Notes:
An RNA of 177 nucleotides, treated with 2A3 and DMS and read out base by base. The 2A3 profile rests on 3,120 reads. Conditions: 150 mM KOAc, 10 mM MgCl2 and 150 mM bicine (pH 8.5), 24 C. DMS adducts were read by reverse transcription with MarathonRT. For 2A3 the reverse transcriptase was SuperScript II with manganese. Values cover nucleotides 27 to 126.

RNA sequence: GGGAACGACUCGAGUAGAGUCGAAAACUGUACAGCACGUGUGCGCAUGCAGAUUGAGCUUUGUACAUGUACCACUUGACAAUCUUGACGGGUGAUCACAUUGGUUUUAAUGCAAUUGGAAAUGGGAGUUAGAGAAGUUCUUCGGAACUUCUCUAACAAAAGAAACAACAACAACAAC
Reactivity to 2A3 in 0.01 (KOAc 150mM, MgCl2 10mM, bicine 150mM(pH8.5), 24C), signal-to-noise 4, nucleotides 027 to 126: c030u040g020u070a030c000a030g000c010a010c050g050u070g020u030g000c030g000c080a120u210g020c000a030g050a170u130u190g050a030g040c000u100u130u110g020u050a010c020a060u060g020u020a060c010c030a040c050u030u060g050a060c020a050a130u080c070u030u150g030a040c020g000g050g000u040g030a060u080c010a030c010a100u010u070g090g030u070u070u050u240a040a050u120g040c040a060a090u070u090g080g050a070a080a040u050g040g020g040a130
Reactivity to DMS in 0.01 (KOAc 150mM, MgCl2 10mM, bicine 150mM(pH8.5), 24C), signal-to-noise 5, nucleotides 027 to 126: c050u010g010u000a030c050a050g000c020a080c050g030u000g000u000g010c030g010c170a130u010g010c040a030g000a070u020u010g030a070g040c050u000u000u000g050u010a020c020a040u000g020u000a100c030c020a090c100u010u010g020a090c080a060a050u020c050u000u010g000a080c120g000g010g020u000g000a080u010c090a050c070a050u010u010g010g010u000u000u010u010a030a080u000g010c070a050a090u000u010g010g010a050a050a090u000g010g000g020a210